[RMDB]
RNA sequence: GGGAACGACUCGAGUAGAGUCGAAAAAUAUCCUCUCGUUGGUCUAAGCUCCCACAGAGUGUAGUGGUCUCAAGUGAGGCUUAACGUAUGCGUGAACCAAAGAAGUUCUCCUUAGAGUGUGUGUUGUGAAUACAGUAUGGUUCGCCAUACUGUAUUCAAAAGAAACAACAACAACAAC
Reactivity to DMS in 0.01 (KOAc 150mM, MgCl2 10mM, bicine 150mM(pH8.5), 24C), signal-to-noise 3, nucleotides 027 to 126: a110u000a110u010c040c000u010c070u000c060g010u010u010g000g000u000c080u010a060a130g030c040u000c030c020c010a090c130a070g000a050g020u010g030u000a070g010u010g010g010u010c030u000c040a140a070g000u000g000a070g000g010c010u000u000a050a040c090g000u020a040u010g010c070g020u000g020a070a090c040c030a030a120a070g010a100a090g000u000u000c030u000c010c040u010u010a080g000a120g020u000g020u010g020u000g000u000u010g020u000
Reactivity to 2A3 in 0.01 (KOAc 150mM, MgCl2 10mM, bicine 150mM(pH8.5), 24C), signal-to-noise 2, nucleotides 027 to 126: a010u110a070u050c020c000u040c000u030c080g060u010u040g030g020u000c040u050a030a090g020c030u010c010c050c000a000c020a020g100a010g030u050g030u100a020g010u010g040g000u060c000u000c060a180a080g070u100g090a020g000g040c000u030u150a050a020c070g080u100a000u130g030c040g030u040g030a040a020c020c000a090a050a140g060a040a020g020u060u030c030u020c000c020u120u110a070g020a070g170u090g000u000g060u000g010u060u040g090u060